[RMDB]
RNA sequence: GGGAACGACUCGAGUAGAGUCGAAAAGAUAUGGAUGAUCUAUGGAACUACUGUAUCAUCUCGGAAACGAGAUGUAAGCAGCCAUAGGUUUGUCCUAAGUCAAAACGCACAACUUCGGUUGUGCGAACCUGCUAAUAGAGUUCGCUCUAUUAGCAGGAAAAGAAACAACAACAACAAC
Reactivity to DMS in 0.01 (KOAc 150mM, MgCl2 10mM, bicine 150mM(pH8.5), 24C), signal-to-noise 6, nucleotides 027 to 126: g010a040u000a300u010g000g010a010u000g000a010u000c000u000a010u000g000g010a090a040c040u010a300c010u000g000u000a170u000c000a000u000c000u000c000g020g000a090a100a210c010g000a020g010a000u000g000u000a050a160g000c000a000g000c000c000a000u000a000g010g010u000u000u020g030u000c000c000u010a070a140g000u010c050a050a050a080a220c010g000c000a010c000a010a000c000u000u000c190g030g000u000u000g020u000g010c000g000a010a060
Reactivity to 2A3 in 0.01 (KOAc 150mM, MgCl2 10mM, bicine 150mM(pH8.5), 24C), signal-to-noise 8, nucleotides 027 to 126: g020a020u080a040u150g000g000a000u020g010a000u010c000u000a010u010g020g020a060a070c100u260a030c000u300g000u020a070u130c010a010u000c000u000c000g020g040a080a090a040c010g000a000g000a010u000g000u030a110a080g020c000a000g020c010c000a010u000a010g000g020u010u070u150g010u000c000c000u010a140a010g050u030c040a030a010a080a140c020g000c010a000c010a010a010c000u070u090c300g170g000u010u000g000u000g000c000g000a000a010
An RNA of 177 nucleotides, treated with DMS and 2A3 and read out base by base. For 2A3 the reverse transcriptase was SuperScript II with manganese. Values cover nucleotides 27 to 126. The 2A3 profile rests on 25,155 reads. The RNA was probed in 150 mM KOAc, 10 mM MgCl2 and 150 mM bicine (pH 8.5) at 24 C. It was measured as part of the RMDB library TTRDEL.